[RMDB]
RNA sequence: GGGAACGACUCGAGUAGAGUCGAAAAUUGUUCUGUUCACACAGCUGGCAAAAGCAAAUAAGGGUGCUGUAGGCAGCGCUGUUGGACUUAUCCUCCUCGGCGUAGCCAUCAAGAUCCUUGCUAGUGCUGUUGCCGAUUUCGCUGCCAUGGACUGGCACCGGCAGUGAAUAUUCGUAUUCACUGCCGGAAAAGAAACAACAACAACAAC
Reactivity to 2A3 in 0.01 (KOAc 150mM, MgCl2 10mM, bicine 150mM(pH8.5), 24C), signal-to-noise 2, nucleotides 027 to 156: u060u030g020u080u040c060u030g020u040u050c010a040c000a000c010a080g010c000u100g020g000c000a030a030a020a000g030c010a000a010a050u130a080a040g000g000g020u140g140c020u010g010u130a130g000g020c020a020g020c020g000c000u020g040u110u070g020g010a000c010u070u060a070u080c010c000u010c000c000u000c000g000g000c000g050u030a050g010c000c000a000u030c010a000a030g020a020u000c010c000u040u000g000c070u100a080g160u010g050c010u000g000u020u040g020c000c000g060a090u080u180u140c040g020c020u010g000c050c040a070u080g070g030a020c050u050g060g030c030a020
Reactivity to DMS in 0.01 (KOAc 150mM, MgCl2 10mM, bicine 150mM(pH8.5), 24C), signal-to-noise 2, nucleotides 027 to 156: u010u000g020u000u000c060u000g040u020u000c030a030c090a050c000a070g030c010u020g030g000c030a030a050a030a020g020c030a160a150a160u000a020a040g060g020g020u000g000c040u020g000u000a300g030g010c050a280g050c000g000c030u000g020u000u000g000g010a120c060u000u000a140u000c240c140u000c000c030u000c020g020g030c010g070u000a180g030c010c010a240u000c050a040a040g030a050u000c010c010u000u010g000c140u000a060g010u000g020c040u000g000u000u000g010c000c010g010a110u000u010u000c050g030c010u000g080c050c010a100u000g010g010a090c060u020g020g030c060a170